Chemical mapping of a 207-nucleotide RNA with 2A3 and DMS.
RNA sequence: GGGAACGACUCGAGUAGAGUCGAAAAGCACAAGACUUCGAACAUUAUAGCAGUUAGUAGUUGCCUAAACCCAUUGCAAUAUAUGGGACAGUAGAGGUCGAAAGCCUAUACUGUGCGGUGAACAUUCAAAAGGGAUGGUACUUCGGUACCAUCCCAACUCCAUCUAUUUGUUCGCAAAUAGAUGGAGAAAAGAAACAACAACAACAAC
Reactivity to 2A3 in 0.01 (KOAc 150mM, MgCl2 10mM, bicine 150mM(pH8.5), 24C), signal-to-noise 3, nucleotides 027 to 156: g040c030a040c040a070a050g080a110c070u080u100c160g060a140a020c030a110u100u130a120u150a080g040c080a020g010u050u120a030g030u060a020g010u050u080g030c000c000u100a130a120a130c000c000c000a010u000u020g000c010a030a000u010a010u010a000u180g000g020g010a000c010a000g010u020a000g010a000g010g000u090c040g070a060a000a000g010c000c000u040a020u000a020c010u020g030u040g080c020g000g060u050g080a070a030c030a080u120u290c130a170a050a080a110g000g000g000a000u000g000g000u020a010c000u000u110c220g030g000u000a000c000c000a000u000c000c000c010a000a000
Reactivity to DMS in 0.01 (KOAc 150mM, MgCl2 10mM, bicine 150mM(pH8.5), 24C), signal-to-noise 2, nucleotides 027 to 156: g010c030a060c080a080a110g020a070c030u010u010c010g030a140a150c130a100u000u000a060u010a140g030c030a120g000u010u020a100g030u000a100g020u000u000g030c010c020u000a030a070a210c000c000c000a010u010u010g010c090a150a200u000a150u020a000u000g000g020g000a070c030a000g020u010a010g000a010g060g020u000c000g010a170a130a180g020c010c010u010a030u000a010c010u010g030u010g010c050g010g040u000g000a070a080c050a060u010u000c140a020a050a100a170g000g030g030a000u010g030g000u000a020c000u000u000c210g040g020u000a010c000c000a000u000c000c000c000a000a030
2A3 adducts were read by reverse transcription with SuperScript II with manganese. The RNA was probed in 150 mM KOAc, 10 mM MgCl2 and 150 mM bicine (pH 8.5) at 24 C.